RNA sequence: GGGAACGACUCGAGUAGAGUCGAAAACGCCAGCGAUUCGUCGCUGGCGAAAUAAAUUCAGCGGUUUAAAUUUCGUCCGCAUAACCGCUGAUGCGGACGAAAAAAGGCAGUUGUUCGCAACUGCCAAGAUUUUAUAAUGAUUCGUCAUUAUAAAAUCAAAAGAAACAACAACAACAAC
Reactivity to DMS in 0.01 (KOAc 150mM, MgCl2 10mM, bicine 150mM(pH8.5), 24C), signal-to-noise 2, nucleotides 027 to 126: c030g050c010c000a010g030c000g030a030u000u040c130g020u000c020g070c010u010g010g030c000g000a000a030a070u010a060a080a080u010u000c040a040g010c020g010g010u000u010u000a060a130a170u000u000u000c010g010u000c000c000g010c000a010u000a100a080c060c020g010c050u000g000a020u000g010c000g000g010a010c010g000a000a000a030a060a130a100g000g000c000a010g020u000u000g010u000u000c140g010c010a000a000c000u010g020c010c000a020a040
Reactivity to 2A3 in 0.01 (KOAc 150mM, MgCl2 10mM, bicine 150mM(pH8.5), 24C), signal-to-noise 3, nucleotides 027 to 126: c030g000c010c000a010g000c020g030a020u070u060c150g020u010c000g120c000u020g010g030c000g000a000a000a000u030a010a030a030u110u090c010a010g040c030g080g150u100u230u240a060a180a140u090u150u040c020g000u010c000c000g000c020a000u030a020a050c030c020g000c030u010g010a010u020g000c000g000g000a000c010g000a000a010a010a020a020a010g000g030c010a000g000u000u000g040u040u050c150g000c070a020a000c010u030g010c000c000a000a000
This 177-nucleotide RNA was probed chemically with DMS and 2A3. The 2A3 profile rests on 3,827 reads. Values cover nucleotides 27 to 126.